[RMDB]
RNA sequence: GGGAACGACUCGAGUAGAGUCGAAAAUGGGCUUGCCUGAGCUACACGUCUGUUACCUGCUCCCCUUUGCAGGGCUGUGGGAUGGUGCCUGGCAAGUGCCACUCACUGAGUGUGACUGAGAGGGGACGCACACGAUUGGUUUCGACCAAUCGUGUGCAAAAGAAACAACAACAACAAC
Reactivity to DMS in 0.01 (KOAc 150mM, MgCl2 10mM, bicine 150mM(pH8.5), 24C), signal-to-noise 1, nucleotides 027 to 126: u010g030g000g000c020u000u000g000c000c000u000g000a190g030c040u000a040c040a080c090g010u000c080u010g000u000u000a220c010c000u000g010c020u000c080c010c010c030u000u000u010g010c080a010g010g000g020c090u010g000u000g000g010g010a030u000g000g000u000g000c000c010u010g000g030c130a030a130g000u000g020c020c010a100c050u000c020a090c010u000g000a090g070u030g010u020g000a180c050u000g000a060g000a030g000g010g030g010a200c240
Reactivity to 2A3 in 0.01 (KOAc 150mM, MgCl2 10mM, bicine 150mM(pH8.5), 24C), signal-to-noise 1, nucleotides 027 to 126: u130g010g010g010c010u000u000g010c020c000u040g040a070g080c040u130a090c070a020c100g060u010c000u050g270u080u060a100c000c010u000g000c000u090c000c010c000c030u090u060u070g010c060a010g010g000g090c040u060g070u120g000g040g060a080u040g070g000u000g000c000c000u000g010g000c000a000a010g000u000g080c000c000a040c010u000c000a100c040u040g070a060g120u110g040u060g060a050c000u030g020a020g000a010g050g000g050g030a050c050
The record gives the reactivity of an RNA of 177 nucleotides to DMS and 2A3. The DMS profile rests on 1,195 reads. The data come from the RNA Mapping Database (RMDB), library OK2TRN.